[RMDB]
RNA sequence: GGGAACGACUCGAGUAGAGUCGAAAACGGAGCCGAACUCGUGCUGCACGGCCACACGCAUCUGAUAACCCAUUAUGAAAUCGAUGGGCCGGACGGCAAAGUGCCGGUUAUCAGCGUACCGUCCGCACCUACGGUGCACUUUCGAGUGCACCGUAGGAAAAGAAACAACAACAACAAC
Reactivity to 2A3 in 0.01 (KOAc 150mM, MgCl2 10mM, bicine 150mM(pH8.5), 24C), signal-to-noise 3, nucleotides 027 to 126: c010g030g000a020g060c020c010g020a040a040c050u060c110g080u080g000c020u010g010c030a030c030g020g000c040c000a100c020a010c050g030c030a000u020c080u140g030a020u060a110a110c000c030c060a000u120u120a160u290g150a040a090a060u080c090g020a060u030g030g060g000c040c010g020g000a000c010g000g050c030a130a060a040g110u120g090c100c000g000g000u050u040a120u100c030a010g040c010g070u040a070c000c020g030u020c030c020g030c030a080
Reactivity to DMS in 0.01 (KOAc 150mM, MgCl2 10mM, bicine 150mM(pH8.5), 24C), signal-to-noise 3, nucleotides 027 to 126: c010g000g010a090g040c030c010g010a250a100c020u000c070g010u010g010c030u000g020c300a090c030g000g000c030c030a110c080a130c160g000c100a090u010c050u000g000a030u010a100a130c070c050c030a090u020u000a080u000g000a030a130a040u010c100g000a050u000g000g010g020c140c010g000g000a100c020g000g000c000a080a110a060g010u000g000c080c010g000g000u000u000a070u010c030a060g020c040g000u000a090c020c010g000u000c070c050g000c140a260